[RMDB]
RNA sequence: GGGAACGACUCGAGUAGAGUCGAAAAGAUAUGGAGGGAGGGCGAUAAGGUCCUCUCGGAAACGAGAGAAGACCUUUUGACGCCUGACUCCUAAGUCAAAAGAGUACGUCCUUCGGGACGUACUCAAGCCAACUUACAAGUUCGCUUGUAAGUUGGCAAAAGAAACAACAACAACAAC
Reactivity to DMS in 0.01 (KOAc 150mM, MgCl2 10mM, bicine 150mM(pH8.5), 24C), signal-to-noise 3, nucleotides 027 to 126: g020a060u010a300u010g000g020a030g020g000g010a150g030g000g010c000g020a110u000a040a040g010g010u000c000c000u000c000u000c000g020g000a060a060a070c000g000a020g000a000g010a100a170g010a000c000c000u020u000u000u020g020a180c030g000c000c000u000g020a300c000u000c000c000u010a040a060g000u010c010a090a090a070a160g000a000g000u000a010c010g000u010c010c010u000u020c210g010g010g000a000c000g000u050a000c000u000c010a010a090
Reactivity to 2A3 in 0.01 (KOAc 150mM, MgCl2 10mM, bicine 150mM(pH8.5), 24C), signal-to-noise 2, nucleotides 027 to 126: g010a030u060a010u120g010g010a030g060g130g020a030g010g000g000c030g080a130u070a270a030g000g020u000c000c000u000c000u020c030g000g000a020a030a010c000g000a010g000a000g030a300a070g020a030c000c000u000u010u050u140g070a030c020g000c000c000u010g020a020c000u010c000c000u010a060a020g040u020c050a000a020a040a210g000a000g000u000a000c000g010u000c020c000u020u060c190g080g000g000a000c000g000u000a010c010u000c000a000a000